[RMDB]
RNA sequence: GGGAACGACUCGAGUAGAGUCGAAAACAAAAUCCAACGUGCCUAUGACACUGAACUCUACAAGGAGCGCAAUCGCAUCGAGCGUUUCUUCAACAAGCUCAAACAGUUUCGACGCGUUGCAACGCGAGAGUCAUCGUGGGUUCGCCCACGAUGACUCAAAAGAAACAACAACAACAAC
Reactivity to 2A3 in 0.01 (KOAc 150mM, MgCl2 10mM, bicine 150mM(pH8.5), 24C), signal-to-noise 2, nucleotides 027 to 126: c090a000a260a000a040u030c090c030a000a030c050g010u010g010c000c010u080a020u180g000a030c000a000c070u020g020a100a000c000u000c000u000a060c000a130a000g110g000a140g000c000g000c000a050a190u300c040g000c040a080u040c010g010a040g000c020g000u000u000u060c000u050u040c010a100a130c030a030a040g000c050u030c030a090a000a090c020a160g020u020u100u150c130g010a030c000g020c000g010u110u200g100c150a180a020c000g000c000g040a040